Structure probing data (2A3) for a 207-nucleotide construct.
The data come from the RNA Mapping Database (RMDB), library OK3TST.
The 2A3 profile rests on 465 reads.
For 2A3 the reverse transcriptase was SuperScript II with manganese.
[RMDB]
RNA sequence: GGGAACGACUCGAGUAGAGUCGAAAAUUUUUGUUUUCCAUUUGCUUGGUAGAUCUUCCUGCAUCCUUUUAUUUUGAGCCUAUGUGUGUCUCUGCACGUGAGAUGGGUUUCCUGAAUACAGCACACUGAUGGGUCUUGACUCUUUAUCCAGUUUGCAGUCCACCAUUUAGUUCGCUAAAUGGUGGACAAAAGAAACAACAACAACAAC
Reactivity to 2A3 in 0.01 (KOAc 150mM, MgCl2 10mM, bicine 150mM(pH8.5), 24C), signal-to-noise 1, nucleotides 027 to 156: u170u190u000u080u090g000u000u000u030u000c070c030a000u060u040u120g090c040u040u040g100g010u070a110g000a190u000c010u120u070c040c000u050g000c080a120u050c040c000u000u020u080u250a140u090u050u060u110g030a000g000c010c020u080a120u090g120u010g010u000g060u030c000u020c020u230g070c100a060c070g070u040g050a030g010a030u050g000g090g000u040u100u020c000c000u020g020a000a000u060a070c040a050g080c000a010c000a000c040u010g050a100u150g000g020g030u010c080u070u070g000a060c000u020c040u030u090u060a150u090c040c020a070g000u030u060u060g080c050a010